[RMDB]
RNA sequence: GGGAACGACUCGAGUAGAGUCGAAAAGUCGUCUUCAAUGGUCAACCUCCUGAGUUCCUCUUCUUCUUCCUUGCUGAGGCUCUUUCCCCCCGCGGAGAGUUGGUUCUUCUUGUUCUGGAGGGCCUUCCUUCUGCGGUGGUCCUGCCUCUCCUUGUCGCUUUUUAACUAUGUUCGCAUAGUUAAAAAGAAAAGAAACAACAACAACAAC
Reactivity to 2A3 in 0.01 (KOAc 150mM, MgCl2 10mM, bicine 150mM(pH8.5), 24C), signal-to-noise 2, nucleotides 027 to 156: g050u040c030g030u010c000u080u070c090a070a130u120g040g040u040c030a060a070c020c010u030c000c000u100g050a050g070u040u090c000c010u000c000u060u000c000u030u030c010u060u040c020c010u100u120g030c080u060g040a020g010g020c010u050c010u210u110u130c010c000c000c030c000c010g000c000g000g000a010g000a000g010u010u010g000g000u000u020c000u000u020c010u070u200g170u280u070c090u120g010g000a000g000g010g000c000c000u010u010c000c010u040u030c020u050g010c000g000g000u040g000g000u030c010c040u030g010c000c000u020c020u030c010c000u050u050g090u070c040g010